[RMDB]
RNA sequence: GGGAACGACUCGAGUAGAGUCGAAAAGAUAUGGAUGUAUCCGUGACAUUGAUGACCUCGGAAACGAGCAAGAUGAGCGGAGUACAUCCUAAGUCAAAAGCUAUACAUAGUUCGCUAUGUAUAGCAACCGAAUUCCGAAGUUCGCUUCGGAAUUCGGAAAAGAAACAACAACAACAAC
Reactivity to DMS in 0.01 (KOAc 150mM, MgCl2 10mM, bicine 150mM(pH8.5), 24C), signal-to-noise 1, nucleotides 027 to 126: g020a020u020a300u000g000g000a010u000g010u000a060u000c020c020g010u010g000a210c060a000u000u040g000a130u000g000a020c300c040u010c000g000g000a200a200a030c010g010a010g000c010a000a120g000a000u000g000a300g000c020g020g000a070g000u000a000c010a000u000c000c000u000a010a060g000u050c020a110a110a120a070g040c000u000a000u000a000c000a000u000a000g000u000u000c170g000c000u000a040u000g000u000a020u000a010g000c020a020a000